Record summary
The data come from the RNA Mapping Database (RMDB), library OK1LIB. The record gives the reactivity of an RNA of 177 nucleotides to DMS and 2A3. For DMS the reverse transcriptase was MarathonRT. Values cover nucleotides 27 to 126. The DMS profile rests on 4,531 reads.
RNA sequence: GGGAACGACUCGAGUAGAGUCGAAAACGCCAUCGGCAGCGACCCGACGGUCCGCGGCCAGGGGUUCGGUCAGGUGCUGAUGCGGUCACGGCUGGACCGUUGCGAUGCCGAACACUGUCCGGCCUACAUAGGCCGGGGAGUUCGCUCCCCGGCCUAUAAAAGAAACAACAACAACAAC
Reactivity to DMS in 0.01 (KOAc 150mM, MgCl2 10mM, bicine 150mM(pH8.5), 24C), signal-to-noise 2, nucleotides 027 to 126: c110g000c050c030a040u000c070g020g040c000a080g000c060g000a130c080c080c050g000a090c070g000g020u020c000c040g000c110g000g000c000c000a080g020g000g010g000u020u030c020g010g010u050c050a130g010g100u030g040c030u000g030a050u020g010c000g010g000u000c020a120c090g000g000c050u010g000g000a010c010c000g000u000u000g030c070g020a140u010g000c010c000g000a060a080c040a090c030u000g000u000c020c000g010g010c010c000u030a100c140
Reactivity to 2A3 in 0.01 (KOAc 150mM, MgCl2 10mM, bicine 150mM(pH8.5), 24C), signal-to-noise 5, nucleotides 027 to 126: c050g040c020c010a080u050c040g010g010c020a020g030c040g070a120c020c030c020g020a050c050g010g070u000c020c040g080c150g120g020c030c010a050g050g030g030g000u060u070c020g000g090u150c060a080g110g120u150g160c030u080g050a090u130g150c020g010g040u050c040a040c150g050g040c070u170g040g000a000c010c010g000u020u070g030c070g020a040u060g030c000c000g000a000a010c050a030c020u040g020u040c010c010g020g000c000c010u040a090c110